[RMDB]
RNA sequence: GGGAACGACUCGAGUAGAGUCGAAAACCGCGUUGCACGCGGGACAGCAACCCCCGAUGCCUAGGUAGUAGCCCAUCCCGGAGAGGGUCAGGCAGUUGUCGGCCACGGUCUGGUCCAGACAGAAGGGCCUGAACCGUGAGUUCGCUCACGGUUCAGGAAAAGAAACAACAACAACAAC
Reactivity to 2A3 in 0.01 (KOAc 150mM, MgCl2 10mM, bicine 150mM(pH8.5), 24C), signal-to-noise 2, nucleotides 027 to 126: c010c000g030c050g060u090u170g090c150a030c130g020c000g000g040g000a000c010a000g160c010a000a170c000c000c000c000c000g040a080u130g020c010c020u000a040g010g020u040a070g080u030a040g040c000c000c040a060u120c020c050c030g010g010a060g070a000g100g060g010u030c020a010g000g000c030a060g110u080u100g050u050c020g000g080c000c000a000c030g000g030u010c010u000g030g050u000c000c000a010g020a060c000a020g220a240a160g020g040g000
Reactivity to DMS in 0.01 (KOAc 150mM, MgCl2 10mM, bicine 150mM(pH8.5), 24C), signal-to-noise 2, nucleotides 027 to 126: c000c000g000c000g050u010u060g020c090a160c060g000c010g010g010g000a090c090a090g020c060a110a100c050c040c000c000c040g030a100u010g020c000c000u050a040g000g010u000a010g000u070a060g030c040c030c010a100u000c010c000c000g020g000a230g010a170g000g010g010u020c040a010g000g000c060a070g020u020u020g000u020c050g010g000c000c000a070c070g030g000u020c000u000g020g000u010c000c030a050g000a060c120a190g000a110a090g000g020g000
Annotation:
This 177-nucleotide RNA was probed chemically with 2A3 and DMS. 2A3 is a SHAPE reagent: it acylates the 2'-hydroxyl of flexible nucleotides of all four kinds. Conditions: 150 mM KOAc, 10 mM MgCl2 and 150 mM bicine (pH 8.5), 24 C. The 2A3 profile rests on 877 reads. Source: RMDB library OK1LIB, as collected in RNAgym. 2A3 adducts were read by reverse transcription with SuperScript II with manganese.